The record gives the reactivity of an RNA of 177 nucleotides to DMS and 2A3.
Source: RMDB library M2PK50, as collected in RNAgym.
The 2A3 profile rests on 2,375 reads.
In probing experiments dimethyl sulfate is read out at A N1 and C N3, which are open when not base-paired.
The reactions ran in a buffer of 150 mM KOAc, 10 mM MgCl2 and 150 mM bicine (pH 8.5), at 24 C.
RNA sequence: GGGAACGACUCGAGUAGAGUCGAAAAAUGCACUGGUUCGCCAGUGCAUGAUUACCCAGAAAGUACCUCGGUAUAAAAGUGCAACCCUUGGAAACAAGGGAAUUCCGAACCGAUUCGUCGGUUCGAAUCUGUUUUUCCAAUUCGUUGGAAAAACAGAAAAAGAAACAACAACAACAAC
Reactivity to DMS in 0.01 (KOAc 150mM, MgCl2 10mM, bicine 150mM(pH8.5), 24C), signal-to-noise 3, nucleotides 027 to 126: a000u000g000c000a000c000u000g000g000u000u010c220g010c010c010a000g020u000g000c000a000u000g000a110u010u000a130c000c000c000a190g000a110a120a100g020u000a010c020c010u010c190g010g010u000a060u000a070a080a120a100g000u000g010c120a130a130c010c000c000u000u000g000g000a120a070a190c000a010a010g000g000g000a010a010u010u000c070c000g020a000a000c000c000g000a000u000u020c200g020u000c000g010g000u000u000c000g010a030a040
Reactivity to 2A3 in 0.01 (KOAc 150mM, MgCl2 10mM, bicine 150mM(pH8.5), 24C), signal-to-noise 2, nucleotides 027 to 126: a000u000g000c010a000c000u000g010g050u050u030c110g060c060c010a000g000u010g000c000a000u000g010a000u010u060a080c000c000c020a020g160a050a160a010g010u040a020c010c030u080c110g030g040u080a100u060a130a170a020a010g070u100g100c040a120a120c010c000c000u020u000g010g050a040a030a010c010a010a020g000g030g060a010a030u050u010c000c000g000a000a000c000c010g010a010u040u070c200g060u010c000g060g000u010u010c000g000a010a070